[RMDB]
RNA sequence: GGGAACGACUCGAGUAGAGUCGAAAAACGCGGAGUACGCUCCGCGACAACACUUCUUUCGACCCGCUAACCGAGACCUAUGGGUCGUUAAAUUACGUCUCUAUCUUACUCACAUAACAUCCCACAAAAAACGUGGUUCGGUUCGCCGAACCACGAAGUCACUUCUUGUCUUCGGACAAGAAGUGACAAAAGAAACAACAACAACAAC
Reactivity to 2A3 in 0.01 (KOAc 150mM, MgCl2 10mM, bicine 150mM(pH8.5), 24C), signal-to-noise 1, nucleotides 027 to 156: a000c020g000c010g000g000a000g000u080a080c100g060c040u000c000c020g080c000g030a000c000a140a030c020a020c110u250u170c080u140u270u090c000g000a000c000c000c000g020c280u240a010a040c010c040g010a000g000a090c000c000u070a150u300g000g000g000u010c000g010u010u020a000a110a060u210u010a020c020g000u000c000u000c000u000a060u000c010u040u060a080c020u020c030a030c020a110u150a150a020c040a100u060c000c000c000a060c010a000a000a000a160a090a090c030g000u010g000g000u000u000c000g000g070u000u020c110g010c110c000g000a010a010c000c000a000c000g000a020a000